[RMDB]
RNA sequence: GGGAACGACUCGAGUAGAGUCGAAAAAAUGCCAAUGCCGAGGCAACGCCCCAAAUUCCUCCCAUUGCAAUGCCAUAUAAACAUCGAAUAGCAAGAAAUAUCGUUAAUGUUGGGGCAAAGGCAGAUACCGAUGUGAAGUUUUCGAACUUCACAUCGGAAAAGAAACAACAACAACAAC
Reactivity to DMS in 0.01 (KOAc 150mM, MgCl2 10mM, bicine 150mM(pH8.5), 24C), signal-to-noise 1, nucleotides 027 to 126: a070a030u000g000c000c040a130a270u010g000c000c000g040a160g040g020c010a030a100c270g030c000c050c050c040a070a100a100u000u000c000c030u000c000c000c070a110u000u000g000c140a120a070u010g000c020c070a080u000a090u000a190a060a110c040a040u000c000g000a030a020u000a110g010c070a070a090g010a020a040a030u000a040u000c180g020u010u000a040a030u000g000u000u020g030g000g000g000c030a000a000a060g000g070c000a040g030a200u000a010